[RMDB]
RNA sequence: GGGAACGACUCGAGUAGAGUCGAAAAGAUAUGGACAGUGGUUGAAGCGAGGAUCUCGGAAACGAGGGAGCUUAACCCUGUCCUAAGUCAAAAGCACCUUCUUGAGCUUCGGCUCAAGAAGGUGCAACCUGAGUAAUUAGUUCGCUAAUUACUCAGGAAAAGAAACAACAACAACAAC
Reactivity to 2A3 in 0.01 (KOAc 150mM, MgCl2 10mM, bicine 150mM(pH8.5), 24C), signal-to-noise 4, nucleotides 027 to 126: g010a010u070a050u120g000g010a010c010a000g050u160g300g040u060u130g300a060a010g000c020g080a280g090g020a020u000c000u000c010g000g030a060a070a030c010g000a010g000g010g000a000g000c000u010u000a010a000c000c010c000u000g000u000c000c000u010a010a000g010u000c010a000a000a060a150g000c010a010c000c000u010u000c000u020u010g000a000g000c010u050u120c300g120g000c010u000c000a000a010g020a000a010g010g010u010g000c000a000a000
Reactivity to DMS in 0.01 (KOAc 150mM, MgCl2 10mM, bicine 150mM(pH8.5), 24C), signal-to-noise 3, nucleotides 027 to 126: g010a040u000a300u010g000g000a020c010a010g000u010g010g010u000u000g010a020a040g010c000g010a070g010g000a030u010c000u000c010g000g010a130a090a230c010g000a030g010g000g000a030g030c010u000u000a040a010c000c000c000u000g000u000c000c000u000a000a050g000u000c040a050a100a100a120g010c000a000c000c000u000u000c000u000u000g010a020g000c000u000u020c230g020g000c000u000c000a000a000g000a010a000g000g020u000g000c010a010a010
Structure probing data (2A3 and DMS) for a 177-nucleotide construct. Values cover nucleotides 27 to 126. The DMS profile rests on 5,737 reads.